[RMDB]
The record gives the reactivity of an RNA of 177 nucleotides to 2A3 and DMS.
Values cover nucleotides 27 to 126.
Conditions: 150 mM KOAc, 10 mM MgCl2 and 150 mM bicine (pH 8.5), 24 C.
Source: RMDB libraries RFM100 and RFMREP, as collected in RNAgym.
RNA sequence: GGGAACGACUCGAGUAGAGUCGAAAACUACACACCACGGUGGUAGGCAGAGUGUAUUUGUAAAUUCAGUAACCCACCAGCACGUGUAAACGCACGCAAAAGCCCUUUAUGGCAAUGUGUCUCGGCUCACAGUGAUCAAUUUCGAUUGAUCACUGUGAAAAGAAACAACAACAACAAC
Reactivity to 2A3 in 0.01 (KOAc 150mM, MgCl2 10mM, bicine 150mM(pH8.5), 24C), signal-to-noise 6, nucleotides 027 to 126: c010u060a020c100a010c000a010c050c010a030c070g040g020u020g010g030u040a050g060g000c070a030g050a060g100u100g040u120a150u100u170u040g200u120a070a110a110u100u070c030a030g030u040a070a120c000c000c000a010c000c000a010g030c070a020c050g010u030g020u040a060a150a030c080g000c010a010c010g010c020a030a070a070a060g020c010c020c010u110u180u080a190u160g020g000c040a040a060u100g010u020g030u050c030u000c030g000g010c000u000
Reactivity to DMS in 0.01 (KOAc 150mM, MgCl2 10mM, bicine 150mM(pH8.5), 24C), signal-to-noise 2, nucleotides 027 to 126: c070u010a000c100a080c030a080c210c040a120c110g000g020u000g000g010u010a130g010g000c100a070g010a080g000u060g000u000a110u000u020u030g000u030a100a080a040u030u050c030a080g000u060a060a090c190c010c020a070c030c000a060g000c120a090c120g040u010g000u010a050a090a090c210g010c150a040c000g020c070a050a030a100a120g010c010c010c120u010u060u000a050u020g020g000c050a120a100u010g030u030g000u000c070u000c020g000g000c240u000